[RMDB]
RNA sequence: GGGAACGACUCGAGUAGAGUCGAAAAGGGAUUAGCCCAAACCAGGAGGCUUGCCUCCUGGGGUUGUAGGACACUCUACACGGAGUUACAAAGGAACGAAGUAAAUGAACAGGCAUGGAAAGGCCGGUACCGUCUGGGAAUUCGUUCCCAGACGGUAAAAAGAAACAACAACAACAAC
Reactivity to DMS in 0.01 (KOAc 150mM, MgCl2 10mM, bicine 150mM(pH8.5), 24C), signal-to-noise 2, nucleotides 027 to 126: g010g000g070a300u010u000a140g000c000c020c020a030a170a220c000c000a000g010g010a000g000g010c030u000u000g030c000c000u000c000c000u000g030g000g000g020u000u000g020u000a090g000g000a150c200a030c050u020c000u000a030c100a110c060g000g000a130g010u000u000a050c090a030a110a110g000g000a090a050c050g000a140a070g000u000a010a040a080u020g000a060a110c070a040g000g000c020a030u040g010g030a250a100a090g000g000c000c000g010g000